[RMDB]
RNA sequence: GGGAACGACUCGAGUAGAGUCGAAAAGAUAUGGAUCGGAGGCCACCAUACAUUAUAUUCGGAAACGAAUAUAUUGUAUGUUGGCCUCCCGAUCCUAAGUCAAAAUCACCUUCGUUCGCGAAGGUGACUCUACAUCCAAGUUCGCUUGGAUGUAGAGAAAAGAAACAACAACAACAAC
Reactivity to 2A3 in 0.01 (KOAc 150mM, MgCl2 10mM, bicine 150mM(pH8.5), 24C), signal-to-noise 4, nucleotides 027 to 126: g040a020u090a040u200g010g000a000u000c000g010g000a000g020g010c010c000a000c010c000a000u010a010c000a010u020u000a010u010a000u010u010c020g070g000a130a100a090c010g010a020a010u010a010u010a000u020u020g010u010a010u000g000u000u000g000g000c010c010u000c000c000c010g000a000u000c000c000u000a060a010g020u000c040a010a010a030a300u050c000a000c000c000u000u000c000g080u050u090c300g020c020g230a010a000g000g000u000g000a000
Reactivity to DMS in 0.01 (KOAc 150mM, MgCl2 10mM, bicine 150mM(pH8.5), 24C), signal-to-noise 6, nucleotides 027 to 126: g010a050u000a300u010g000g010a000u000c010g020g000a030g000g010c000c000a010c050c000a020u000a010c000a010u000u000a000u000a010u000u000c000g010g000a180a150a210c010g020a010a000u000a000u010a000u000u000g000u000a000u000g000u000u000g000g000c000c000u000c010c010c010g010a000u000c000c000u000a010a100g010u010c040a090a070a110a300u000c010a010c000c000u000u000c000g020u000u010c270g020c020g020a020a010g000g010u000g000a000